[RMDB]
RNA sequence: GGGAACGACUCGAGUAGAGUCGAAAAGGAUGUGGCUCCUUAGUGUGACCAAGCAACACAUCAUUAGAAGGGGUCCCAGUCCUAGCAGGAGCUUAUAUAGUGGGCAUGGGGAUCUGGAAAAGCAUAACAUAAUCAGUAAGUUCGCUUACUGAUUAUGAAAAGAAACAACAACAACAAC
Reactivity to DMS in 0.01 (KOAc 150mM, MgCl2 10mM, bicine 150mM(pH8.5), 24C), signal-to-noise 9, nucleotides 027 to 126: g000g020a090u000g010u000g010g000c020u000c020c010u000u000a110g020u000g010u000g010a120c090c090a090a110g020c180a150a060c020a030c030a060u000c120a130u010u010a110g010a050a040g000g000g000g010u000c010c040c010a050g010u000c010c010u000a100g010c110a080g010g010a120g010c060u000u000a080u010a110u010a090g020u000g000g000g010c070a080u000g010g010g010g000a060u000c090u000g000g000a060a050a070a100g010c110a060u010a080a210
Reactivity to 2A3 in 0.01 (KOAc 150mM, MgCl2 10mM, bicine 150mM(pH8.5), 24C), signal-to-noise 6, nucleotides 027 to 126: g030g000a020u020g010u020g040g010c000u000c000c000u030u030a110g020u030g010u020g050a090c050c090a110a040g110c020a110a080c000a010c000a050u180c050a060u110u210a110g160a170a010g000g000g000g010u020c000c020c000a020g150u030c000c010u010a010g000c020a020g020g120a060g040c000u140u030a120u030a010u040a200g070u090g000g020g010c090a080u070g000g000g010g040a030u040c060u060g050g000a080a100a020a030g050c040a030u030a140a040
Background: This 177-nucleotide RNA was probed chemically with DMS and 2A3. The RNA was probed in 150 mM KOAc, 10 mM MgCl2 and 150 mM bicine (pH 8.5) at 24 C. Source: RMDB library OK2TRN, as collected in RNAgym.